[RMDB]
RNA sequence: GGGAACGACUCGAGUAGAGUCGAAAAACAGAAAAAAGGAGUUUAAAUUGGAUUUGCAAACGGACGGUACUAAAUACCGUCACUUUUACGUCUAACUUAUCGUUAACUCUGCAAAAAGAAAACAAGAAAAACAAGCGUGAGUUCGCUCACGCUUGAACUACCCUAGUCUGUUCGCAGACUAGGGUAGAAAAGAAACAACAACAACAAC
Reactivity to 2A3 in 0.01 (KOAc 150mM, MgCl2 10mM, bicine 150mM(pH8.5), 24C), signal-to-noise 1, nucleotides 027 to 156: a000c020a070g060a030a140a090a000a000a000g050g010a050g010u110u130u000a090a000a010u080u020g110g000a000u060u010u090g060c060a040a070a030c030g040g000a000c000g000g000u030a010c080u220a030a070a070u040a000c000c000g000u000c000a010c000u010u040u020u030a030c000g000u000c020u030a060a140c060u080u070a030u090c020g060u000u030a010a010c000u000c030u130g060c120a030a030a000a110a050g060a000a140a000a000c160a040a130g070a070a070a010a010a010c010a000a000g050c000g000u010g000a000g000u040u130c180g010c050u000c020a000c000g030c000u000u000g000a000a000